This 207-nucleotide RNA was probed chemically with 2A3. The reactions ran in a buffer of 150 mM KOAc, 10 mM MgCl2 and 150 mM bicine (pH 8.5), at 24 C.
[RMDB]
RNA sequence: GGGAACGACUCGAGUAGAGUCGAAAAGGGUGUUAAAUUCUAUAAAUAUUCUAUCAUUAUUUACGUAGUAAUGAGUUGCAUUUGGUAAUAUAGCUUUAGGGAAGGGAUGCAAUGCAUUUGGAUUGUGAUAAACGAUUAAACCUUCGUCCCAAGUCUCCUCCUGGUAUUGAUUCGUCAAUACCAGGAGAAAAGAAACAACAACAACAAC
Reactivity to 2A3 in 0.01 (KOAc 150mM, MgCl2 10mM, bicine 150mM(pH8.5), 24C), signal-to-noise 3, nucleotides 027 to 156: g040g040g010u060g120u170u060a170a220a190u260u080c130u120a290u200a300a140a130u140a100u210u120c040u160a120u070c020a050u060u140a130u090u180u100a110c070g020u060a000g020u000a040a030u000g010a020g050u060u040g020c000a020u020u040u050g030g020u130a180a070u170a070u080a140g010c030u090u110u170a010g000g000g070a040a040g050g000g010a010u020g080c060a020a010u020g020c020a030u110u050u110g110g030a040u040u080g000u000g050a040u110a080a170a010c060g020a010u000u110a030a050a000c030c000u060u030c020g050u000c020c000c010a010a080g020u030c050u030c040

For 2A3, 709 sequencing reads were counted.